RNA sequence: GGGAACGACUCGAGUAGAGUCGAAAAAAACAUUAAUGUGCAUGUGAGUCACAUGGGGAUCUUGUUAAAAUGCAGAUUGUGAUUCACCUGUUCUGGAGGCAGAAAUCCCACAUUUCUAACAAAUUCCCAGGAGAUGCUGAUGCUGCAGGUCCUUAGACGUGUUAUGACAAUUCGUUGUCAUAACACGAAAAGAAACAACAACAACAAC
Reactivity to DMS in 0.01 (KOAc 150mM, MgCl2 10mM, bicine 150mM(pH8.5), 24C), signal-to-noise 2, nucleotides 027 to 156: a070a040a040c060a090u010u000a080a070u020g000u000g000c030a080u000g000u000g030a060g000u010c030a040c020a090u030g030g030g020g020a030u000c080u010u020g000u000u000a020a040a080a050u000g040c070a100g000a120u000u000g030u000g010a130u000u000c000a080c030c050u000g050u000u000c040u000g030g030a120g000g000c030a100g030a050a050a100u010c020c000c030a140c030a040u000u000u000c060u000a020a100c040a010a020a160u000u000c010c000c000a130g010g000a100g000a050u000g000c030u000g030a190u010g020c010u010g000c020a090g030g000u010c020c040u000u010a110g000a270
Reactivity to 2A3 in 0.01 (KOAc 150mM, MgCl2 10mM, bicine 150mM(pH8.5), 24C), signal-to-noise 4, nucleotides 027 to 156: a000a000a000c120a080u200u150a100a060u120g040u040g030c020a000u070g020u030g040a020g050u060c000a000c030a090u070g020g040g020g010a040u040c060u100u070g040u130u140a110a140a080a060u190g020c050a020g010a130u060u060g040u040g000a020u020u000c010a010c020c010u020g030u060u080c080u110g080g020a040g050g000c110a030g100a050a060a050u040c020c010c000a010c000a020u030u040u010c070u050a050a050c020a040a070a040u030u000c010c000c000a010g060g020a070g010a010u060g000c010u030g010a070u040g040c010u030g010c010a010g020g070u020c010c010u050u090a090g030a120